[RMDB]
RNA sequence: GGGAACGACUCGAGUAGAGUCGAAAAUUGGCGUUCGCGCCAAAGUGUGAUAUGGAGGAUCGCAAGACGGUGAACUACAACUGACGUGUCGGAAACGACACGCAGUUGCACCGUUGAUGACCGAUCCUCCUAAGUCUAAGCCCUGUUUCGACAGGAACGAUUACUCCCUAUUCGUAGGGAGUAAUCGAAAAGAAACAACAACAACAAC
Reactivity to 2A3 in 0.01 (KOAc 150mM, MgCl2 10mM, bicine 150mM(pH8.5), 24C), signal-to-noise 4, nucleotides 027 to 156: u020u010g010g000c010g030u060u040c260g020c010g030c150c020a020a020a010g190u150g010u030g010a000u010a010u060g000g000a000g000g000a010u000c020g000c060a130a130g040a020c000g000g000u000g010a070a080c100u260a070c300a000a010c010u010g170a230c010g000u000g000u000c000g010g030a020a020a030c010g000a000c000a000c010g000c000a010g000u000u000g000c000a000c010c030g000u000u030g030a050u040g010a000c030c000g000a000u000c000c030u000c000c020u000a000a000g010u000c010u040a100a060g010c010c000c000u020g000u010u050u000c080g050a080c070a180g140g050a080a070
Reactivity to DMS in 0.01 (KOAc 150mM, MgCl2 10mM, bicine 150mM(pH8.5), 24C), signal-to-noise 1, nucleotides 027 to 156: u020u010g020g020c030g030u000u000c210g020c010g060c030c010a000a020a070g040u010g000u000g000a090u000a270u000g020g000a050g030g000a020u010c030g080c010a050a250g010a030c000g010g010u010g030a160a300c070u000a160c000a000a010c000u020g020a160c000g050u000g000u020c000g000g000a120a080a300c010g000a050c000a020c000g010c000a000g000u000u010g020c000a020c000c000g020u000u000g010a080u010g000a120c300c000g020a020u010c000c000u000c010c000u010a010a020g010u000c010u000a150a220g040c010c010c000u030g000u000u000u000c190g040a090c050a040g000g010a110a100
Structure probing data (2A3 and DMS) for a 207-nucleotide construct. 2A3 adducts were read by reverse transcription with SuperScript II with manganese.